An RNA of 207 nucleotides, treated with 2A3 and DMS and read out base by base. It was measured as part of the RMDB library OK3TST. DMS adducts were read by reverse transcription with MarathonRT. Values cover nucleotides 27 to 156. The reactions ran in a buffer of 150 mM KOAc, 10 mM MgCl2 and 150 mM bicine (pH 8.5), at 24 C.

RNA sequence: GGGAACGACUCGAGUAGAGUCGAAAACUGGAACACGGCGCGGGCAAAACCUCGCGGAGUGAUGGAGCGCAGCAUUUUAGUCCUUUCUGACCUUCCGCCCAAAAACUUCCAGGCCCAAAAGAAAUUCACGCCUUCUACUCCAUCCGGCGGAGGGAGCGUAAAGAAGAUCAUUCGUGAUCUUCUUUACAAAAGAAACAACAACAACAAC
Reactivity to 2A3 in 0.01 (KOAc 150mM, MgCl2 10mM, bicine 150mM(pH8.5), 24C), signal-to-noise 4, nucleotides 027 to 156: c000u010g000g020a020a000c030a040c150g170g000c010g030c010g000g020g000c090a080a040a070a130c030c010u040c020g010c030g000g020a070g000u130g010a010u010g000g010a020g010c100g000c100a080g020c090a180u060u070u060u250a110g060u170c010c030u040u110u030c080u070g080a090c000c000u010u020c000c010g020c020c000c020a060a180a010a000a000c020u020u020c010c000a020g030g020c000c010c000a050a120a010a010g040a010a080a030u200u150c070a030c110g070c030c010u070u080c050u110a060c000u020c020c000a030u000c030c070g010g000c000g000g000a000g000g000g010a030g080c050
Reactivity to DMS in 0.01 (KOAc 150mM, MgCl2 10mM, bicine 150mM(pH8.5), 24C), signal-to-noise 1, nucleotides 027 to 156: c040u010g000g000a010a120c040a150c050g020g000c030g070c150g040g120g040c000a040a060a160a300c100c070u020c030g000c060g000g010a050g010u000g000a030u000g010g010a040g000c040g000c050a080g030c090a110u000u000u010u000a000g020u000c040c040u000u000u000c040u000g010a230c010c010u010u010c030c000g070c000c020c030a040a070a050a090a070c060u000u030c020c000a020g020g000c010c040c030a200a040a070a030g010a060a090a060u000u000c060a050c010g050c000c060u000u010c010u000a070c010u000c000c000a090u000c000c000g100g050c030g020g010a020g030g010g000a070g000c120